Chemical mapping of a 177-nucleotide RNA with 2A3 and DMS. In probing experiments dimethyl sulfate is read out at A N1 and C N3, which are open when not base-paired. The RNA was probed in 150 mM KOAc, 10 mM MgCl2 and 150 mM bicine (pH 8.5) at 24 C. The DMS profile rests on 732 reads. 2A3 adducts were read by reverse transcription with SuperScript II with manganese.
[RMDB]
RNA sequence: GGGAACGACUCGAGUAGAGUCGAAAAAGAAAUAAAGCGUACGAAGAUGGACGUACGCAACCAGUGCGUACAGGAAUCGCACAUCCAGCGCUCUAAGGACAGCGCAAAACCAAAUAAUAGAAAAAAAGUAGUGUCUAUGGUUCGCCAUAGACACUACAAAAGAAACAACAACAACAAC
Reactivity to 2A3 in 0.01 (KOAc 150mM, MgCl2 10mM, bicine 150mM(pH8.5), 24C), signal-to-noise 1, nucleotides 027 to 126: a010g030a020a010a010u100a060a060a020g000c000g030u000a000c000g030a080a030g090a150u160g010g140a010c030g000u000a000c000g010c010a030a020c020c000a000g030u000g000c000g000u040a010c050a180g190g090a090a070u080c010g000c000a000c000a020u070c010c000a050g010c000g000c010u010c070u110a060a100g040g020a040c060a030g000c000g000c040a010a020a000a070c040c000a030a080a040u250a100a040u120a100g190a050a150a030a010a000a010a000
Reactivity to DMS in 0.01 (KOAc 150mM, MgCl2 10mM, bicine 150mM(pH8.5), 24C), signal-to-noise 1, nucleotides 027 to 126: a100g030a200a160a070u030a060a060a040g010c000g000u010a000c000g010a140a040g000a060u010g000g000a160c010g000u000a010c010g030c010a090a050c110c030a240g040u000g000c010g000u000a200c200a190g000g000a080a110u000c010g010c010a040c000a250u010c040c060a100g030c030g000c010u000c080u050a140a090g050g080a060c240a010g000c040g010c000a000a070a070a170c150c060a070a080a130u000a050a010u010a160g000a020a000a050a000a070a020a120